RNA sequence: GGGAACGACUCGAGUAGAGUCGAAAAUUUAUUCUGACAGGAUGUCAUUCCAAAACUGCGCCAUCCCGUUUCGCGUCGUUUACAAGCCACCGCUCAUGCGUUAGGCCGUAAAUUAUCCGGUCGCAGACACGCCCCAUGAUUUCGAUCAUGGGGCGUGAAAAGAAACAACAACAACAAC
Reactivity to DMS in 0.01 (KOAc 150mM, MgCl2 10mM, bicine 150mM(pH8.5), 24C), signal-to-noise 1, nucleotides 027 to 126: u000u020u020a030u030u000c050u000g020a040c050a110g030g020a070u030g000u000c020a100u050u000c060c060a040a080a180a180c100u000g110c060g000c110c010a090u000c050c010c020g010u000u000u000c010g010c130g000u000c150g010u000u000u000a020c060a080a180g010c000c030a150c210c020g090c030u000c150a150u000g020c000g000u010u000a040g000g010c010c200g000u000a010a010a120u000u000a100u010c060c010g030g020u000c010g020c060a100g010a280